[RMDB]
RNA sequence: GGGAACGACUCGAGUAGAGUCGAAAAUACAGGCAAGUCACGUGGCCGAUGCACUGGAAAUUCACCCGGUCAUGCUCUAUCGCUGGAGACAAGAGAUGCGUGAAGGCAAACUGGCAGAUAACGAUAAGAUGACACGUAUAUUCGUAUACGUGUCAUCAAAAGAAACAACAACAACAAC
Reactivity to 2A3 in 0.01 (KOAc 150mM, MgCl2 10mM, bicine 150mM(pH8.5), 24C), signal-to-noise 5, nucleotides 027 to 126: u080a010c020a010g030g030c030a070a050g040u080c020a020c150g080u140g030g000c030c010g040a040u070g010c060a060c080u030g060g080a050a100a080u150u090c030a090c040c010c000g010g000u040c020a030u050g010c000u010c020u080a070u080c030g010c050u040g060g040a060g030a080c080a090a020g050a010g000a090u080g020c040g030u050g030a060a030g050g000c010a020a050a060c050u030g030g000c020a020g010a130u100a090a040c040g030a040u030a160a060
Reactivity to DMS in 0.01 (KOAc 150mM, MgCl2 10mM, bicine 150mM(pH8.5), 24C), signal-to-noise 8, nucleotides 027 to 126: u010a120c100a090g010g030c040a070a070g010u010c070a080c110g020u000g010g020c030c030g010a090u000g010c090a060c070u000g010g000a070a080a120u000u010c100a110c080c030c030g040g000u000c040a060u000g010c030u000c040u010a080u000c100g010c070u000g010g000a100g010a070c100a070a070g010a060g010a060u010g010c070g010u010g010a080a100g000g000c050a030a070a110c060u000g000g000c040a050g000a070u010a040a060c100g000a120u000a070a120
This 177-nucleotide RNA was probed chemically with 2A3 and DMS. For 2A3 the reverse transcriptase was SuperScript II with manganese. The reactions ran in a buffer of 150 mM KOAc, 10 mM MgCl2 and 150 mM bicine (pH 8.5), at 24 C. It was measured as part of the RMDB library OK2TST.